The record gives the reactivity of an RNA of 177 nucleotides to DMS and 2A3. In probing experiments dimethyl sulfate is read out at A N1 and C N3, which are open when not base-paired. The RNA was probed in 150 mM KOAc, 10 mM MgCl2 and 150 mM bicine (pH 8.5) at 24 C. The data come from the RNA Mapping Database (RMDB), library RFM100.
RNA sequence: GGGAACGACUCGAGUAGAGUCGAAAAAUUAUACCGUAAAUCUUUUUAAAUUCUGGAACUAAUUAUAUAGAGGAUAUGUCUCAAUUUGUUCUGCAUUAAUGCCACAGUGGGGAUGGAGGCCAGGCCGAAUGUCUCUUGACUUCGGUCAAGAGACAUUAAAAGAAACAACAACAACAAC
Reactivity to DMS in 0.01 (KOAc 150mM, MgCl2 10mM, bicine 150mM(pH8.5), 24C), signal-to-noise 1, nucleotides 027 to 126: a120u080u030a030u040a120c030c010g000u020a080a180a030u030c000u000u020u050u000u050a000a060a130u040u000c050u000g000g000a040a080c030u010a000a060u010u020a090u090a180u050a130g000a040g010g010a150u010a050u030g050u030c040u000c040a030a070u010u000u000g010u000u000c020u000g000c090a060u000u000a070a070u040g010c140c080a110c160a060g010u000g010g000g000g020a020u010g000g020a110g000g000c090c010a070g000g010c050c070g020
Reactivity to 2A3 in 0.01 (KOAc 150mM, MgCl2 10mM, bicine 150mM(pH8.5), 24C), signal-to-noise 2, nucleotides 027 to 126: a000u150u150a100u100a160c000c010g000u020a020a070a230u100c040u060u160u170u030u150a030a120a060u190u000c030u130g050g000a040a050c030u000a050a050u130u040a050u090a020u070a220g000a030g000g030a030u050a040u300g110u100c000u000c040a010a140u000u010u100g000u000u030c000u000g040c000a000u000u060a150a040u260g010c010c020a060c000a030g030u040g010g010g000g010a040u050g010g000a010g010g000c000c000a020g000g100c000c000g020